[RMDB]
RNA sequence: GGGAACGACUCGAGUAGAGUCGAAAAAUUUGCGUUCUCCAACGCUAGGUUUAAUUGAAUUGAGGCUCAGUUUAAGCAAGCCGUCCACAGACCAUCCAGUAUCACGACGAUACUUGCGACCUUGCGGGAGCACACGGGAGUUCGCUCCCGUGUGCUCAAAAGAAACAACAACAACAAC
Reactivity to DMS in 0.01 (KOAc 150mM, MgCl2 10mM, bicine 150mM(pH8.5), 24C), signal-to-noise 3, nucleotides 027 to 126: a090u000u010u010g010c020g000u000u000c030u000c040c120a100a090c050g010c020u010a030g010g020u000u010u010a010a100u000u010g000a050a090u000u010g000a140g040g000c090u010c020a020g010u000u010u000a110a140g010c050a030a030g000c110c010g000u010c020c080a060c230a090g010a130c050c070a070u030c170c080a040g000u000a040u000c080a120c240g000a060c070g010a080u000a010c020u020u020g020c020g010a040c010c020u000u010g000c030g010g000
Reactivity to 2A3 in 0.01 (KOAc 150mM, MgCl2 10mM, bicine 150mM(pH8.5), 24C), signal-to-noise 2, nucleotides 027 to 126: a000u130u150u210g030c030g000u010u030c030u020c020c010a070a000c000g000c020u010a010g000g030u030u060u120a110a060u080u160g060a020a050u050u060g040a060g050g080c040u040c040a020g010u050u070u040a070a050g020c020a010a000g000c000c020g000u000c010c020a150c030a060g050a050c040c030a020u080c030c010a000g040u060a020u120c030a020c260g170a010c020g010a080u030a140c000u010u020g030c000g040a010c010c000u010u040g000c000g020g080
Chemical mapping of a 177-nucleotide RNA with DMS and 2A3. The 2A3 profile rests on 1,591 reads. Conditions: 150 mM KOAc, 10 mM MgCl2 and 150 mM bicine (pH 8.5), 24 C. Reactivities are given for positions 27 through 126.